[RMDB]
This 177-nucleotide RNA was probed chemically with DMS and 2A3. For 2A3, 2,081 sequencing reads were counted. For DMS the reverse transcriptase was MarathonRT. Conditions: 150 mM KOAc, 10 mM MgCl2 and 150 mM bicine (pH 8.5), 24 C. It was measured as part of the RMDB library OK2TST.
RNA sequence: GGGAACGACUCGAGUAGAGUCGAAAAAGCCGGAACAGGAAACGUGAUCGAAGCUGUUCGACAUGAACGAGCAGUCCUUGCCGAUAUCCGUAGAGCUUCAGUCAUGUCGGACGAAGAGCUUUACACAAGUAGCACGAUGAUUCGUCAUCGUGCUACUAAAAGAAACAACAACAACAAC
Reactivity to DMS in 0.01 (KOAc 150mM, MgCl2 10mM, bicine 150mM(pH8.5), 24C), signal-to-noise 2, nucleotides 027 to 126: a140g010c070c000g030g010a040a140c130a150g010g010a060a100a080c160g020u000g010a080u020c080g000a030a030g000c050u000g010u000u000c000g010a090c040a050u010g000a040a070c040g000a070g000c040a120g000u000c030c030u010u000g020c050c050g000a130u000a060u000c070c060g010u020a070g010a050g010c020u000u000c050a230g000u000c000a000u010g000u010c030g010g000a030c010g010a120a070g010a030g010c000u000u000u020a060c050a080c150a080
Reactivity to 2A3 in 0.01 (KOAc 150mM, MgCl2 10mM, bicine 150mM(pH8.5), 24C), signal-to-noise 2, nucleotides 027 to 126: a020g090c050c010g010g050a150a110c090a070g070g050a130a050a000c030g000u050g040a070u110c170g020a020a020g010c030u030g000u010u030c000g010a020c020a020u080g040a090a030c080g010a000g000c000a000g040u020c010c040u020u080g050c010c010g110a120u060a100u150c050c020g010u030a040g030a000g080c010u190u170c050a060g000u000c000a010u020g040u190c040g060g000a010c010g010a050a050g070a000g050c000u000u050u000a030c050a000c000a010